[RMDB]
RNA sequence: GGGAACGACUCGAGUAGAGUCGAAAAGGGUGGCUCUACAUUUGUUGCGGGUUCGAGACCCGUCAGAGCGAAAGCUCUGUAGCUCAAUGGUAGAGCGGUGUAGUCACCAAAGUCGCCUUCGGGCGACGAUAUAGUCUAGCUUCGGCUAGACUAUAUCAAAAGAAACAACAACAACAAC
Reactivity to DMS in 0.01 (KOAc 150mM, MgCl2 10mM, bicine 150mM(pH8.5), 24C), signal-to-noise 9, nucleotides 027 to 126: g010g020g020u000g000g010c050u010c140u000a010c010a030u000u000u010g020u010u010g010c010g000g000g010u000u000c020g000a300g000a040c000c000c000g010u000c000a000g000a010g000c000g000a130a030a190g010c000u000c000u000g010u000a020g020c010u000c000a030a020u010g020g010u010a020g010a010g070c010g000g010u000g000u000a020g000u010c010a010c010c000a080a090a160g000u000c000g010c000c000u000u010c210g000g010g000c000g000a000c010
Reactivity to 2A3 in 0.01 (KOAc 150mM, MgCl2 10mM, bicine 150mM(pH8.5), 24C), signal-to-noise 5, nucleotides 027 to 126: g110g000g010u010g010g010c030u030c040u080a010c000a030u040u060u190g060u040u020g010c030g000g010g010u010u010c010g000a010g010a020c000c000c000g000u010c000a010g000a000g000c010g040a060a020a010g000c000u000c000u000g000u000a010g000c010u000c010a030a040u250g300g070u200a040g000a000g010c000g000g000u000g000u000a010g000u010c010a000c000c000a030a050a020g000u000c000g000c000c000u020u060c180g060g000g000c000g000a000c000